Chemical mapping of a 177-nucleotide RNA with 2A3 and DMS. For DMS, 9,674 sequencing reads were counted.

RNA sequence: GGGAACGACUCGAGUAGAGUCGAAAACGACUUACCUUCGGGUAAGUCGACAUAGGUGAGUUCAUCGGAUAGCUGCCUAGGUGAGUUGAUCGGAUAGCUGCCACAUGUAACGGUUCGCCGUUACAAAAUAAAGGUUGUAGUUCGCUACAACCUUUAUAAAAGAAACAACAACAACAAC
Reactivity to 2A3 in 0.01 (KOAc 150mM, MgCl2 10mM, bicine 150mM(pH8.5), 24C), signal-to-noise 4, nucleotides 027 to 126: c000g000a000c000u010u000a000c000c010u040u060c230g020g010g010u000a000a000g000u000c000g000a000c000a090u210a050g030g020u080g220a050g010u040u080c070a030u030c080g080g000a030u020a020g010c010u060g040c020c040u070a130g090g070u090g090a040g010u030u070g170a050u010c050g090g000a030u030a030g010c020u030g020c020c000a070c010a090u100g010u010a000a010c010g040g000u040u030c160g010c040c000g010u000u000a010c000a000a080a000
Reactivity to DMS in 0.01 (KOAc 150mM, MgCl2 10mM, bicine 150mM(pH8.5), 24C), signal-to-noise 6, nucleotides 027 to 126: c020g010a010c000u000u000a010c000c000u000u010c230g040g010g010u000a000a010g010u000c000g000a030c150a060u010a090g000g020u000g000a060g010u000u000c120a050u000c050g010g010a060u000a050g010c010u000g010c020c040u010a090g030g020u010g010a050g010u000u000g000a060u000c040g000g010a050u010a040g010c010u000g000c010c020a130c250a110u010g010u010a000a010c000g000g010u010u010c240g010c000c000g020u000u010a000c000a040a040a080
Description:
The 2A3 profile rests on 4,744 reads. Source: RMDB library M2PK50, as collected in RNAgym. Conditions: 150 mM KOAc, 10 mM MgCl2 and 150 mM bicine (pH 8.5), 24 C.